This 177-nucleotide RNA was probed chemically with 2A3 and DMS.
Source: RMDB libraries RFM100 and RFMREP, as collected in RNAgym.
The RNA was probed in 150 mM KOAc, 10 mM MgCl2 and 150 mM bicine (pH 8.5) at 24 C.
RNA sequence: GGGAACGACUCGAGUAGAGUCGAAAAUACUCUUCGGAGUACAGGUUUCAAACGAGGCCUUGAGUGAGAUCGUGAAAGUUCGCCGUCGGGCGAAUGGAAGCGAAAAGUCGACCCCAAGCUGAAAAGCGAGUAGCGUAGAAUUCGUUCUACGCUACUCAAAAGAAACAACAACAACAAC
Reactivity to 2A3 in 0.01 (KOAc 150mM, MgCl2 10mM, bicine 150mM(pH8.5), 24C), signal-to-noise 8, nucleotides 027 to 126: u030a010c010u000c000u030u070c220g130g010a020g000u030a050c040a020g050g050u030u000u040c200a300a280a070c150g010a020g000g020c010c000u060u090g060a090g060u190g060a070g020a090u050c010g000u010g030a030a010a010g010u000u000c000g000c010c020g200u300c250g160g010g000c000g000a010a000u010g000g000a010a000g000c000g000a050a030a020a050g050u020c010g030a070c000c000c000c010a010a030g000c010u030g020a020a050a040a010g020c020
Reactivity to DMS in 0.01 (KOAc 150mM, MgCl2 10mM, bicine 150mM(pH8.5), 24C), signal-to-noise 5, nucleotides 027 to 126: u010a010c000u000c010u010u040c170g010g000a030g000u000a070c180a030g000g000u000u000u020c030a070a100a120c240g000a050g010g000c030c020u000u050g010a100g040u010g010a120g000a080u020c010g000u000g000a010a250a170g000u010u000c000g030c000c010g020u020c300g000g000g000c030g000a010a000u000g000g000a300a210g000c010g000a010a040a070a100g000u000c010g000a150c120c000c000c070a070a110g010c020u000g000a090a080a050a030g010c040